An RNA of 177 nucleotides, treated with 2A3 and DMS and read out base by base. For DMS, 12,579 sequencing reads were counted. For 2A3 the reverse transcriptase was SuperScript II with manganese. Source: RMDB library TTRDES, as collected in RNAgym. Conditions: 150 mM KOAc, 10 mM MgCl2 and 150 mM bicine (pH 8.5), 24 C.
RNA sequence: GGGAACGACUCGAGUAGAGUCGAAAAGAUAUGGAACAAGAGUUCGAUAAGCCUCUAUCGGAAACGAUAGAAGGCUUUUGACGAACCUUGUUCCUAAGUCAAAGUGAGCGUCUUCGGACGCUCACAACGAAUGAUAUUUGUUCGCAAAUAUCAUUCGAAAAGAAACAACAACAACAAC
Reactivity to 2A3 in 0.01 (KOAc 150mM, MgCl2 10mM, bicine 150mM(pH8.5), 24C), signal-to-noise 4, nucleotides 027 to 126: g000a000u020a010u050g000g000a010a010c000a010a010g080a050g040u000u020c030g070a300u100a300a010g000c010c010u000c000u010a000u000c000g020g000a070a010a010c020g000a000u000a010g040a050a070g030g000c090u010u000u010u050g080a040c010g000a000a010c000c000u000u000g010u000u000c000c000u000a000a000g000u000c030a190a040a050g010u000g000a000g010c000g020u020c010u060u120c300g140g000a000c000g010c010u000c000a000c000a000a000
Reactivity to DMS in 0.01 (KOAc 150mM, MgCl2 10mM, bicine 150mM(pH8.5), 24C), signal-to-noise 5, nucleotides 027 to 126: g010a010u000a060u010g000g000a010a000c000a010a010g000a170g010u000u000c000g020a160u010a020a020g020c000c000u000c000u000a000u000c000g020g000a030a020a020c000g010a020u000a000g000a050a050g020g010c000u000u000u000u010g020a250c050g000a000a010c000c000u000u000g010u000u000c000c000u000a000a040g000u000c010a110a130a160g020u000g010a000g010c000g020u000c000u000u010c290g020g010a010c000g010c000u000c010a000c000a040a100